[RMDB]
RNA sequence: GGGAACGACUCGAGUAGAGUCGAAAAGACGUGGAGGUUUCGCGCCCUCCUUUGCGCGUAAGUACGUCGAAAUUCGGUGCUGUGGAUCGCACCGUGUGAUCCAUUAGAUAUCCGCUAUGUGCCGCGGUUGGGCAUUUACACUUACCCGAAAGGGGAAGGCCGUAAUAUACUUCGGUAUAUUACGGCCAAAAGAAACAACAACAACAAC
Reactivity to 2A3 in 0.01 (KOAc 150mM, MgCl2 10mM, bicine 150mM(pH8.5), 24C), signal-to-noise 1, nucleotides 027 to 156: g000a000c000g030u080g020g180a140g110g110u050u110u260c070g000c010g010c010c000c010u210c000c000u030u000u000g000c030g000c000g000u070a030a030g040u090a080c010g040u020c120g060a080a130a000u120u020c060g000g020u030g000c030u000g030u060g020g030a030u120c020g020c040a090c170c120g070u160g000u000g000a000u000c000c000a000u040u060a000g080a090u070a250u120c030c000g000c010u050a080u280g000u020g040c000c000g090c040g170g000u080u210g070g000g030c000a000u040u150u040a080c030a000c070u140u130a130c000c000c000g010a000a000a160g010g000g010g000a090a050
Source: RMDB library OK3TST, as collected in RNAgym.
Chemical mapping of a 207-nucleotide RNA with 2A3.
For 2A3 the reverse transcriptase was SuperScript II with manganese.